[RMDB]
RNA sequence: GGGAACGACUCGAGUAGAGUCGAAAACGGUGCAGGCUGGAGACCACCGUUAAGCGUCGCGGCAACCAAUUAAGCGCCGAUUCCAAUCAGCGCGACUACGCCCUCGCUGCCUGAUCAGCGACGGCUAGCUGUCGGCCCGGGUUGUGUUCCCGAACCCCUUAGGUGUGGUCUUCGGACCACACCUAAGAAAAGAAACAACAACAACAAC
Reactivity to 2A3 in 0.01 (KOAc 150mM, MgCl2 10mM, bicine 150mM(pH8.5), 24C), signal-to-noise 1, nucleotides 027 to 156: c020g010g000u030g010c050a050g000g020c030u060g050g020a020g010a020c020c020a000c040c000g120u140u230a020a010g010c010g040u000c000g000c010g000g040c000a000a060c040c000a090a120u280u240a150a060g000c020g010c010c020g020a050u180u060c060c080a090a130u050c010a100g050c000g040c000g060a000c020u060a050c090g020c000c000c000u010c000g000c010u040g020c010c060u210g020a230u220c010a000g000c000g000a000c010g010g000c010u010a000g000c010u020g000u020c000g010g040c000c000c000g000g000g000u030u080g000u060g000u180u010c010c000c000g070a150a140c000c000c010

Annotation:
Structure probing data (2A3) for a 207-nucleotide construct. The RNA was probed in 150 mM KOAc, 10 mM MgCl2 and 150 mM bicine (pH 8.5) at 24 C. As a SHAPE reagent, 2A3 marks flexible, mostly unpaired nucleotides at the ribose 2'-OH.